[RMDB]
RNA sequence: GGGAACGACUCGAGUAGAGUCGAAAAGCCACUAUGAAUCUAGUCACUAAAUAAACACAAUUAGCUACUGUGUGUAAUAGUGAGUGUUGAUAACACAAAAUAAUAGUAUAGUUUUGGAAGAUUAUACGCGCCCUUGCUCCGUUCGCGGAGCAAGGAAGAUCCGCAUUAUCUUCGGAUAAUGCGGAUCAAAAGAAACAACAACAACAAC
Reactivity to 2A3 in 0.01 (KOAc 150mM, MgCl2 10mM, bicine 150mM(pH8.5), 24C), signal-to-noise 2, nucleotides 027 to 156: g030c030c020a070c020u150a120u300g110a130a030u040c040u050a010g070u000c010a000c020u000a000a000a080u060a030a040a000c000a010c000a020a160u170u140a070g020c040u120a010c020u050g020u000g000u010g010u040a000a100u000a040g000u000g010a030g000u010g000u000u090g070a220u300a300a030c020a020c000a070a190a010a000u250a090a120u100a090g000u000a000u000a020g020u000u040u040u110g190g040a190a050g010a070u030u000a080u020a030c000g030c000g030c070c000c000u000u000g010c000u000c000c000g010u040u040c090g000c030g090g020a000g020c000a000a000g000g000a000a020